[RMDB]
The record gives the reactivity of an RNA of 177 nucleotides to DMS and 2A3. The reactions ran in a buffer of 150 mM KOAc, 10 mM MgCl2 and 150 mM bicine (pH 8.5), at 24 C. 2A3 is a SHAPE reagent: it acylates the 2'-hydroxyl of flexible nucleotides of all four kinds. It was measured as part of the RMDB library OK2TST. 2A3 adducts were read by reverse transcription with SuperScript II with manganese.
RNA sequence: GGGAACGACUCGAGUAGAGUCGAAAACAGCAACACCGUGGAGGAAAAAUCCAACCGUAUUAUCGAAGUCCUGCUGGCCUCGGUAACUGCUGAUGAAUUGAUGAUGGGUAAGCUGGUGGGCAUCGGCAGAAAUCUAACUCUUCGGAGUUAGAUUUCUAAAAGAAACAACAACAACAAC
Reactivity to DMS in 0.01 (KOAc 150mM, MgCl2 10mM, bicine 150mM(pH8.5), 24C), signal-to-noise 2, nucleotides 027 to 126: c030a070g010c050a030a120c100a080c070c050g040u020g000g000a080g010g000a020a120a080a060a100u010c000c010a070a130c060c080g010u010a090u010u000a050u000c030g010a050a050g010u010c020c100u000g020c090u010g020g010c030c040u000c050g000g010u000a030a040c200u000g020c010u000g020a100u000g010a090a090u000u000g000a090u000g020a090u000g000g000g000u010a050a100g000c040u000g000g010u000g010g000g000c010a030u000c060g010g000c150
Reactivity to 2A3 in 0.01 (KOAc 150mM, MgCl2 10mM, bicine 150mM(pH8.5), 24C), signal-to-noise 1, nucleotides 027 to 126: c010a000g000c000a000a030c020a010c050c050g060u120g020g020a060g000g240a200a130a000a000a030u050c030c010a020a070c000c000g080u080a080u160u040a060u180c040g030a070a000g060u060c020c060u040g090c020u060g020g050c000c000u040c010g000g000u020a060a060c030u030g050c020u020g010a070u050g070a120a150u190u120g040a060u040g020a040u070g060g020g000u020a040a020g010c010u020g010g040u050g040g000g000c040a010u050c010g000g030c010